[RMDB]
RNA sequence: GGGAACGACUCGAGUAGAGUCGAAAAGGAAGGUAGUUCUCACUACUUCCCCACCUAGUGAGAACUACGGUGGACGGAUUUAGGUACGGUGGACAUGCGAAAGCAUGUCCAUCGUACUUAAAUCCGAGCACCUUCAAGGGUUCGCCCUUGAAGGUGCAAAAGAAACAACAACAACAAC
Reactivity to DMS in 0.01 (KOAc 150mM, MgCl2 10mM, bicine 150mM(pH8.5), 24C), signal-to-noise 1, nucleotides 027 to 126: g010g000a120a100g010g010u010a000g000u000u000c000u000c010a020c020u000a010c120u000u000c020c010c000c060a120c300c190u000a010g000u010g000a010g000a040a010c000u000a000c000g010g040u010g010g010a210c000g000g020a000u000u000u000a010g010g040u000a000c000g040g010u000g000g010a010c010a010u000g010c000g000a100a100a170g000c000a000u000g020u010c000c000a000u000c000g030u000a000c000u000u000a000a000a000u010c000c000g010a040